[RMDB]
RNA sequence: GGGAACGACUCGAGUAGAGUCGAAAAUACUAAUGCAGCAAAUGUAUAGUGGUGCGUCGGUCAUGACGAUUUCGGAAACGAACAUAGAUGGUUACAGAUACGGUAUUCCAUCUGGCCAGCACCAAGAGCUACAUCAACCGUUCGCGGUUGAUGUAGCAAAAGAAACAACAACAACAAC
Reactivity to DMS in 0.01 (KOAc 150mM, MgCl2 10mM, bicine 150mM(pH8.5), 24C), signal-to-noise 2, nucleotides 027 to 126: u010a170c050u010a060a070u000g050c000a030g000c120a040a060a120u010g020u000a070u010a130g060u010g000g000u010g000c010g000u010c180g010g030u000c020a080u010g000a100c210g010a150u000u010u000c030g010g000a140a120a200c010g030a040a020c250a160u000a050g000a030u000g000g000u000u000a020c000a070g000a300u010a060c300g000g000u000a020u030u000c000c000a020u000c000u000g000g020c010c000a080g000c060a030c020c040a080a050g000a180

Description: The record gives the reactivity of an RNA of 177 nucleotides to DMS. DMS adducts were read by reverse transcription with MarathonRT. Conditions: 150 mM KOAc, 10 mM MgCl2 and 150 mM bicine (pH 8.5), 24 C. The DMS profile rests on 884 reads.